Conditions: 150 mM KOAc, 10 mM MgCl2 and 150 mM bicine (pH 8.5), 24 C.
Structure probing data (2A3) for a 207-nucleotide construct.
For 2A3 the reverse transcriptase was SuperScript II with manganese.

RNA sequence: GGGAACGACUCGAGUAGAGUCGAAAAACAGAAAAAAGGAGUUUAAAUUAGAUUUGCAAACGGAGGGUACUAAAUACCGUCACUUUUACGUCUAACUUAUCGUUAACUCUGCAAAAAGAAAACAAGAAAAACAAGCGUGAGUUCGCUCACGCUUGAAGGAAAACGGAUAGUUCGCUAUCCGUUUUCCAAAAGAAACAACAACAACAAC
Reactivity to 2A3 in 0.01 (KOAc 150mM, MgCl2 10mM, bicine 150mM(pH8.5), 24C), signal-to-noise 1, nucleotides 027 to 156: a000c010a010g040a030a120a000a000a020a010g050g000a040g000u050u080u060a000a040a070u040u010a040g010a010u050u050u110g070c080a050a060a040c020g020g000a060g010g040g040u050a030c060u160a000a050a120u020a030c040c000g140u010c090a170c100u000u000u080u100a070c020g000u000c010u030a080a040c040u060u160a030u170c040g060u050u010a040a010c000u000c030u010g030c080a040a070a030a000a000g090a040a070a010a020c010a030a080g130a090a090a010a000a020c000a000a000g000c000g000u000g000a020g000u070u210c220g010c110u000c010a000c000g010c000u000u000g000a000a000